[RMDB]
RNA sequence: GGGAACGACUCGAGUAGAGUCGAAAAGCAUACAACUUCGGUUGUAUGCAACGACAGAGUUGACUGUCAUAAACAACGUAACAUGUGAGUUACUAUAACACAUUGCAGCAGCUUUCGAGCUGCUGAAGACUACCUCCGUAUUCGUACGGAGGUAGUCAAAAGAAACAACAACAACAAC
Reactivity to DMS in 0.01 (KOAc 150mM, MgCl2 10mM, bicine 150mM(pH8.5), 24C), signal-to-noise 3, nucleotides 027 to 126: g040c010a020u000a010c000a000a000c000u000u010c220g030g020u010u000g000u010a000u000g000c000a020a020c180g020a020c010a010g000a080g020u000u000g000a190c000u010g000u000c130a070u020a070a040a040c060a040a020c080g010u000a070a040c080a160u000g030u000g020a150g000u000u000a020c030u010a120u000a070a070c170a040c120a110u010u000g000c000a000g020c010a010g000c000u000u000u010c210g000a000g030c000u000g000c000u010g000a020a070
Reactivity to 2A3 in 0.01 (KOAc 150mM, MgCl2 10mM, bicine 150mM(pH8.5), 24C), signal-to-noise 4, nucleotides 027 to 126: g000c000a000u000a010c000a020a000c020u050u070c160g150g000u000u000g010u000a010u010g010c000a010a020c030g000a000c000a000g040a000g060u020u050g110a260c000u030g010u010c050a030u160a020a070a010c060a020a010c050g020u030a000a010c020a090u150g060u050g260a120g080u090u030a020c030u060a050u060a120a070c120a010c020a110u090u300g030c000a000g000c000a000g010c000u060u070u160c200g070a000g000c000u000g000c000u000g000a020a000
The record gives the reactivity of an RNA of 177 nucleotides to DMS and 2A3. The data come from the RNA Mapping Database (RMDB), library M2PK50. For 2A3 the reverse transcriptase was SuperScript II with manganese. The reactions ran in a buffer of 150 mM KOAc, 10 mM MgCl2 and 150 mM bicine (pH 8.5), at 24 C. High DMS reactivity at an A or C suggests that its Watson-Crick edge is free.